The data come from the RNA Mapping Database (RMDB), library OK2TST.
An RNA of 177 nucleotides, treated with 2A3 and DMS and read out base by base.
The 2A3 profile rests on 99,038 reads.
The DMS profile rests on 82,533 reads.
For 2A3 the reverse transcriptase was SuperScript II with manganese.
RNA sequence: GGGAACGACUCGAGUAGAGUCGAAAAACUAUCGCUGUACAAGGCGUCGGACGUCUAUCUGAACGAGCAGACGAUUCCCGACAUCGUCAAGCGCGUGCUGCGCGCCGCCUCGUUCGGCAGCCGCGAAUCAUAGUAAUCAUUUCGAUGAUUACUAUGAAAAAGAAACAACAACAACAAC
Reactivity to 2A3 in 0.01 (KOAc 150mM, MgCl2 10mM, bicine 150mM(pH8.5), 24C), signal-to-noise 9, nucleotides 027 to 126: a000c100u110a090u170c040g000c020u030g020u110a060c040a130a070g020g010c020g040u060c100g160g090a070c010g010u000c020u050a110u010c020u050g040a050a020c020g000a020g010c030a010g020a010c010g010a030u110u110c040c020c020g030a040c020a040u030c020g030u020c030a080a050g010c010g000c010g030u100g170c110u170g010c030g000c000g000c010c010g030c000c010u020c010g020u030u020c000g010g000c010a010g010c010c020g050c020g060a030a050
Reactivity to DMS in 0.01 (KOAc 150mM, MgCl2 10mM, bicine 150mM(pH8.5), 24C), signal-to-noise 9, nucleotides 027 to 126: a100c110u000a090u000c050g020c010u000g000u000a100c190a110a100g010g010c020g020u010c140g020g010a300c040g010u000c040u000a110u010c030u000g010a040a060c040g000a020g010c110a120g000a020c000g000a050u000u000c070c030c040g010a090c150a050u000c020g010u000c040a160a090g000c010g010c010g020u000g020c170u010g000c020g010c020g010c040c070g010c100c010u000c020g010u000u000c010g010g010c150a050g010c030c070g010c070g010a090a150